RNA sequence: GGGAACGACUCGAGUAGAGUCGAAAAUAACAGUGAUGUAAAGAGUUUUCUUUACUGGUGCGGAUUGACGGCGUUAUGAAUCACUGUUAAGUUAUGAACACUUUAUUAACGCAGCAGGGAAAAGACAAUGACUGAUUAUGAUGAAGUAAUGCCGACAAGACACGCUAAAGUUCGCUUUAGCGUGUCUAAAAGAAACAACAACAACAAC
Reactivity to DMS in 0.01 (KOAc 150mM, MgCl2 10mM, bicine 150mM(pH8.5), 24C), signal-to-noise 1, nucleotides 027 to 156: u000a030a120c010a040g050u000g010a040u010g010u020a030a070a060g000a150g020u010u010u000u000c000u000u030u000a060c000u000g020g010u010g050c040g000g000a180u010u000g010a110c030g010g000c040g080u010u000a000u010g000a200a050u000c040a080c010u030g000u010u010a020a110g030u000u000a040u000g010a140a110c150a070c050u000u010u000a130u020u000a040a090c040g010c010a120g030c020a170g040g060g010a130a030a110a080g010a030c120a080a040u010g010a060c050u020g060a120u000u010a100u030g010a060u000g030a060a230g000u010a050a060u000g000c080c010g000a080c080a120
Reactivity to 2A3 in 0.01 (KOAc 150mM, MgCl2 10mM, bicine 150mM(pH8.5), 24C), signal-to-noise 2, nucleotides 027 to 156: u060a000a000c020a000g020u020g000a040u060g050u150a000a100a000g080a020g050u100u060u070u010c050u040u060u040a020c000u030g030g000u050g040c080g100g000a110u060u130g020a060c020g040g000c000g030u000u020a020u120g070a080a040u060c020a000c050u040g000u030u010a060a040g000u040u120a080u090g110a110a020c030a030c070u050u140u080a190u120u070a100a000c020g020c060a030g050c040a040g040g020g000a030a130a000a030g040a030c050a090a060u040g020a020c030u040g020a060u070u050a040u230g060a020u050g020a030a000g020u040a020a010u080g000c020c010g000a000c030a020